[RMDB]
RNA sequence: GGGAACGACUCGAGUAGAGUCGAAAAACGUCACAGUACUGUGGUCCAGAGAAGCACAUCGCACUGGAGGUGAUUUCCAUCACCUGUGGCUCCAUGUACUUCUCUGUUCCACAGUACUGGAAACGAAGGCUAUCAACUUUUUCGAAAGUUGAUAGCCAAAAGAAACAACAACAACAAC
Reactivity to DMS in 0.01 (KOAc 150mM, MgCl2 10mM, bicine 150mM(pH8.5), 24C), signal-to-noise 3, nucleotides 027 to 126: a120c000g000u010c050a300c010a000g000u000a000c010u010g000u000g000g020u000c030c000a030g010a030g010a010a010g010c070a000c000a020u010c300g030c180a180c010u000g000g010a000g010g000u000g020a020u000u010u040c300c150a130u000c000a000c010c000u010g020u000g030g000c090u000c100c200a000u000g000u000a040c000u000u000c000u000c000u010g020u000u010c000c020a010c010a000g040u000a000c000u020g020g000a060a100a020c000g000a080a100
Reactivity to 2A3 in 0.01 (KOAc 150mM, MgCl2 10mM, bicine 150mM(pH8.5), 24C), signal-to-noise 8, nucleotides 027 to 126: a000c020g010u020c010a010c000a090g010u000a000c000u010g000u000g000g000u010c010c000a000g000a000g000a000a000g010c020a000c000a010u020c030g020c020a040c060u060g090g090a010g000g000u010g000a020u190u200u060c110c100a010u020c000a010c000c010u150g090u060g300g000c030u010c030c010a000u000g000u000a010c000u010u000c000u000c010u010g000u010u000c000c000a000c000a000g000u000a000c000u000g000g000a000a000a000c010g040a090a030

An RNA of 177 nucleotides, treated with DMS and 2A3 and read out base by base. Conditions: 150 mM KOAc, 10 mM MgCl2 and 150 mM bicine (pH 8.5), 24 C. 2A3 is a SHAPE reagent: it acylates the 2'-hydroxyl of flexible nucleotides of all four kinds.